[RMDB]
RNA sequence: GGGAACGACUCGAGUAGAGUCGAAAACGCUGGGAAAGUACGAAUCUCGUCAUGCUAGAUGGACGUCUCUGAAGCGCGCACGGAGACGUCCAUCUUGGACCAUGACGGAGACUAUACUUUCCUGUGCUGAAGCGCGCACGGCAACCGAAAGGUGCGACUUUUGCAUGAUGUUCGCAUCAUGCAAAAGAAAAGAAACAACAACAACAAC
Reactivity to DMS in 0.01 (KOAc 150mM, MgCl2 10mM, bicine 150mM(pH8.5), 24C), signal-to-noise 1, nucleotides 027 to 156: c110g040c060u010g030g000g010a030a020a010g010u000a020c020g000a060a030u000c000u000c010g020u010c020a030u000g020c010u000a070g040a020u000g040g030a020c010g010u010c000u000c000u000g000a040a090g010c040g040c000g030c020a300c050g000g010a030g020a020c000g010u020c000c000a000u000c010u010u000g000g000a060c300c020a020u000g020a010c000g000g000a020g000a040c030u000a120u000a020c010u000u000u000c010c010u000g010u010g050c050u010g030a070a040g000c000g030c000g040c000a110c030g020g000c050a130a120c010c020g010a100a220a200g010g000u000g020c000g030a180
Reactivity to 2A3 in 0.01 (KOAc 150mM, MgCl2 10mM, bicine 150mM(pH8.5), 24C), signal-to-noise 2, nucleotides 027 to 156: c060g020c030u070g000g000g010a000a000a010g000u000a030c050g090a300a300u010c020u000c010g000u000c000a000u010g020c040u040a010g000a000u000g000g000a000c000g000u020c000u000c000u000g050a180a060g010c010g000c000g020c000a050c050g020g000a000g000a000c020g010u010c010c000a000u000c000u010u060g000g000a010c020c000a000u000g000a010c010g020g010a010g020a000c050u030a010u010a060c000u000u000u040c000c000u000g060u020g000c050u060g060a050a030g010c000g000c020g000c000a000c020g110g010c060a110a170c010c010g010a080a040a010g040g000u010g000c020g010a100